[RMDB]
RNA sequence: GGGAACGACUCGAGUAGAGUCGAAAAUCUCCCAAUGAAGAAACUUUCACAUGUCUUACUCUCUGUCCUAGUCCCAGAGCCUGUAAAGGUGAACCACUGGGACUGGCUGGGGGAGAAGAGGAAGAUUUGUUCCAGAAGGAACUGUCUGAGGGAUGGAGAAGAAUCACUAGUUCGCUAGUGAUUCUUCAAAAGAAACAACAACAACAAC
Reactivity to DMS in 0.01 (KOAc 150mM, MgCl2 10mM, bicine 150mM(pH8.5), 24C), signal-to-noise 1, nucleotides 027 to 156: u010c110u020c000c020c000a110a160u000g000a150a100g000a160a100a040c040u000u000u000c020a060c050a190u000g000u020c020u000u000a020c010u000c000u010c020u010g020u000c000c000u000a110g000u000c020c020c010a070g000a300g000c070c040u040g000u020a080a100a130g020g050u000g040a080a160c090c290a210c040u000g000g050g030a030c000u010g010g000c080u010g030g030g030g040g000a050g010a090a020g000a050g000g010a170a020g000a030u000u000u000g000u000u000c020c020a190g060a300a260g050g030a050a000c000u000g010u000c110u020g000a200g030g040g020a190u000g000g030a300
Reactivity to 2A3 in 0.01 (KOAc 150mM, MgCl2 10mM, bicine 150mM(pH8.5), 24C), signal-to-noise 2, nucleotides 027 to 156: u040c030u000c000c000c000a030a060u140g020a050a050g000a080a180a070c040u080u190u140c100a080c030a120u180g050u040c020u010u070a110c000u000c000u030c020u050g120u210c040c030u100a010g020u010c000c000c000a030g010a010g040c000c010u090g040u190a090a170a040g060g010u050g130a110a070c050c040a030c080u000g000g000g000a000c000u000g010g000c000u020g010g010g030g000g010a030g050a030a010g030a020g010g030a030a030g000a030u150u060u150g040u040u000c030c030a050g040a200a160g110g000a000a020c010u040g080u050c010u050g020a050g000g000g050a050u100g040g060a070